Structure probing data (2A3) for a 207-nucleotide construct.
RNA sequence: GGGAACGACUCGAGUAGAGUCGAAAAACUUGAGGAGGCAGUCUGUCCGUUCUCAGAUCUCCAGCUGCAUGCUGGGAGAACCACUACUCUCUUCAAAGCUGUCAGACAGGGACAUUUAAGUCUGCAGAGGAUUCUGCUGCCUUUUGUUUGGCAAUGACACCCCUACCGACUUCGGUCGGUAGGGGUGAAAAGAAACAACAACAACAAC
Reactivity to 2A3 in 0.01 (KOAc 150mM, MgCl2 10mM, bicine 150mM(pH8.5), 24C), signal-to-noise 1, nucleotides 027 to 156: a000c040u040u060g000a030g000g000a000g000g000c100a000g020u030c080u150g040u060c080c000g010u000u000c040u010c030a070g010a150u050c080u050c020c000a010g010c000u150g130c070a120u240g000c030u010g000g000g000a010g010a000a000c000c000a010c000u040a000c000u060c000u000c010u080u070c020a040a000a040g050c040u000g090u000c000a000g010a060c000a000g030g040g040a040c060a050u080u300u130a140a120g000u040c080u030g020c010a000g010a030g100g050a130u300u060c000u070g040c030u100g010c010c030u000u220u160u050g000u000u000u000g000g010c010a000a070u120g030a080

Values cover nucleotides 27 to 156.